[RMDB]
RNA sequence: GGGAACGACUCGAGUAGAGUCGAAAAACACUAUUCGCCAGGCGAAGGACGACCGCAAUAUCACCGGUAUUGUGAUGGAUCUGAAAAACUUCGCAGGCGGCGACCAACCGUCUAUGCAGUACAUCGAUCACCUAAAUGAGUUCGCUCAUUUAGGUGAAAAAGAAACAACAACAACAAC
Reactivity to DMS in 0.01 (KOAc 150mM, MgCl2 10mM, bicine 150mM(pH8.5), 24C), signal-to-noise 5, nucleotides 027 to 126: a090c090a120c140u000a100u010u000c010g040c010c030a180g040g010c000g010a030a020g000g010a130c150g000a080c090c000g020c030a010a020u010a010u000c020a170c210c180g020g010u000a010u000u010g000u000g000a090u000g020g000a130u010c030u010g000a060a090a070a080a120c030u000u000c020g010c020a080g020g010c050g020g000c050g010a130c130c100a060a120c060c040g010u000c020u010a060u000g010c060a040g000u010a140c120a070u010c070g000a150
Reactivity to 2A3 in 0.01 (KOAc 150mM, MgCl2 10mM, bicine 150mM(pH8.5), 24C), signal-to-noise 4, nucleotides 027 to 126: a000c060a030c070u170a140u170u150c020g010c030c000a100g130g000c010g010a000a020g030g030a040c070g030a030c010c020g000c010a010a000u010a020u070c140a150c200c180g020g000u020a030u010u040g010u030g070a160u110g040g100a130u030c030u040g030a110a040a020a030a090c000u020u010c000g000c000a010g040g000c030g000g010c010g020a040c010c020a050a030c020c000g020u010c040u050a080u170g050c040a020g060u040a040c020a120u030c100g060a050